An RNA of 177 nucleotides, treated with DMS and 2A3 and read out base by base.
Reactivities are rounded to 0.1 and cut off at 0 and 3.

[RMDB]
RNA sequence: GGGAACGACUCGAGUAGAGUCGAAAAGAUAUGGAAGGGAUGUGAGUGCGAGGAUCUGAGUUCGGAAACGAACUCAGGGAGCACCCAUCACCUUCCUAAGUCAAAGCGUGAGGUUCGCCUCACGCAACAUUGUGAGUUCGUUCGCGAACUCACAAUGAAAAGAAACAACAACAACAAC
Reactivity to DMS in 0.01 (KOAc 150mM, MgCl2 10mM, bicine 150mM(pH8.5), 24C), signal-to-noise 3, nucleotides 027 to 126: g000a060u000a300u000g010g010a020a010g020g000g010a020u000g010u030g010a160g110u000g000c010g010a120g000g010a010u000c000u010g000a020g000u000u000c000g010g000a080a070a170c000g000a000a000c000u000c000a000g010g000g000a030g010c010a000c040c040c000a010u000c020a090c010c010u010u010c000c000u000a020a110g010u000c040a170a080a130g000c020g030u000g000a010g020g020u010u000c300g040c010c000u000c000a010c010g010c010a030a060
Reactivity to 2A3 in 0.01 (KOAc 150mM, MgCl2 10mM, bicine 150mM(pH8.5), 24C), signal-to-noise 3, nucleotides 027 to 126: g010a010u110a010u170g000g000a000a000g100g020g010a000u030g300u170g210a300g100u040g070c010g020a300g070g010a020u020c000u000g000a010g000u000u000c000g000g000a030a060a050c010g000a000a000c010u000c000a000g000g000g010a000g000c000a010c030c000c010a000u020c000a090c000c010u010u020c000c000u000a030a000g020u010c070a100a110a060g010c010g000u010g010a000g060g060u070u200c300g130c070c010u000c000a000c000g000c000a000a010
2A3 adducts were read by reverse transcription with SuperScript II with manganese. The 2A3 profile rests on 5,272 reads.